[RMDB]
RNA sequence: GGGAACGACUCGAGUAGAGUCGAAAACUACUCCUCACUUCGGUGAGGAGUAGAAAAAGAUAUGGAUUCUAUCCAGGGAGUUCCGUCGGAAACGACGGACUUUGAUCUGGUAAGGAAUCCUAAGUCAAAAAGAUCACAUCCUUCGGGAUGUGAUCAACCCAUGCAUAACCUUCGGGUUAUGCAUGGGAAAAGAAACAACAACAACAAC
Reactivity to 2A3 in 0.01 (KOAc 150mM, MgCl2 10mM, bicine 150mM(pH8.5), 24C), signal-to-noise 1, nucleotides 027 to 156: c000u000a020c000u010c000c000u000c000a010c000u030u070c280g060g010u000g000a000g010g000a000g000u000a010g000a000a000a000a000a020g040a020u040a030u100g000g000a000u000u000c000u010a070u040c010c000a000g030g030g000a020g030u300u120c020c010g000u000c000g000g000a040a020a080c010g030a000c000g010g000a000c000u020u010u030g070a180u070c000u000g010g010u060a170a150g050g010a010a010u010c000c000u010a070a020g020u010c060a050a030a030a000a100g020a000u020c000a000c000a000u000c000c000u060u090c190g130g000g000a020u010g000u000g000a000u000c000a000a020